[RMDB]
This 177-nucleotide RNA was probed chemically with DMS and 2A3. 2A3 adducts were read by reverse transcription with SuperScript II with manganese. The reactions ran in a buffer of 150 mM KOAc, 10 mM MgCl2 and 150 mM bicine (pH 8.5), at 24 C.
RNA sequence: GGGAACGACUCGAGUAGAGUCGAAAAAGAUGCCAAAAUUGUGCGUAUCAGCUUAGAUGAUGACAGCACGGGAGCAGGCAUUCAUCUAAAUGAUCAACUCGGUUAUCGUCAGUUUGGAGCCAGUUAAACCUGACCUAUUAUUCGUAAUAGGUCAGGUAAAAGAAACAACAACAACAAC
Reactivity to DMS in 0.01 (KOAc 150mM, MgCl2 10mM, bicine 150mM(pH8.5), 24C), signal-to-noise 8, nucleotides 027 to 126: a090g010a060u000g010c010c010a060a100a100a090u010u000g030u000g010c040g010u000a090u000c010a040g000c160u010u000a080g010a070u000g000a040u000g010a050c080a130g020c010a060c080g000g000g000a130g010c130a170g010g000c010a030u000u010c050a050u000c030u000a020a040a060u000g000a070u010c110a060a060c050u010c140g010g010u000u000a060u010c050g020u010c060a070g010u000u010u000g000g000a090g000c030c030a060g000u010u000a060a090
Reactivity to 2A3 in 0.01 (KOAc 150mM, MgCl2 10mM, bicine 150mM(pH8.5), 24C), signal-to-noise 6, nucleotides 027 to 126: a000g040a020u080g040c020c000a030a020a090a100u130u090g030u020g040c010g020u060a020u020c020a010g070c060u170u150a070g010a220u150g000a000u030g060a030c040a050g000c030a030c010g050g050g010a090g020c100a050g030g000c020a010u050u070c000a010u040c010u080a110a120a090u130g040a060u080c030a030a050c030u020c070g090g050u070u110a110u120c030g050u040c050a160g020u020u110u150g040g000a020g020c010c010a030g010u070u110a040a160